[RMDB]
RNA sequence: GGGAACGACUCGAGUAGAGUCGAAAAAUUAUUCAGCGCCCGUUCCUGACCGUGUGGCUUACCUGACCGCCGGUAUCGACUCCCAGCUGGACCGCUACGAAAUGCGCGUAUGGGGAUGGGGGCCGGGAUACCGGACGUGAUUCGUCACGUCCGGUAUAAAAGAAACAACAACAACAAC
Reactivity to 2A3 in 0.01 (KOAc 150mM, MgCl2 10mM, bicine 150mM(pH8.5), 24C), signal-to-noise 1, nucleotides 027 to 126: a000u140u150a110u070u180c010a000g000c020g080c010c030c000g000u000u010c000c000u040g050a020c000c000g050u080g030u020g220g000c050u100u130a220c090c040u090g220a250c030c000g010c000c020g000g000u010a110u090c030g010a030c000u000c000c000c000a000g010c010u030g010g010a020c030c000g000c040u050a080c140g200a110a030a100u220g000c010g070c000g020u020a080u130g010g000g000g000a000u070g050g000g000g010g020c010c000g040g030g000
Reactivity to DMS in 0.01 (KOAc 150mM, MgCl2 10mM, bicine 150mM(pH8.5), 24C), signal-to-noise 2, nucleotides 027 to 126: a100u010u000a070u000u010c040a100g010c030g030c020c020c010g020u000u000c020c000u000g010a020c010c010g000u020g040u000g000g010c060u010u000a080c230c230u010g000a110c050c010g010c030c010g020g010u010a030u010c040g000a050c030u000c010c020c000a110g020c030u000g000g000a040c040c030g000c010u010a130c100g010a100a080a090u000g010c010g020c120g000u000a090u000g000g000g000g010a160u000g030g020g000g010g000c010c000g010g000g010
Structure probing data (2A3 and DMS) for a 177-nucleotide construct. Conditions: 150 mM KOAc, 10 mM MgCl2 and 150 mM bicine (pH 8.5), 24 C. It was measured as part of the RMDB library OK2TRN. DMS adducts were read by reverse transcription with MarathonRT.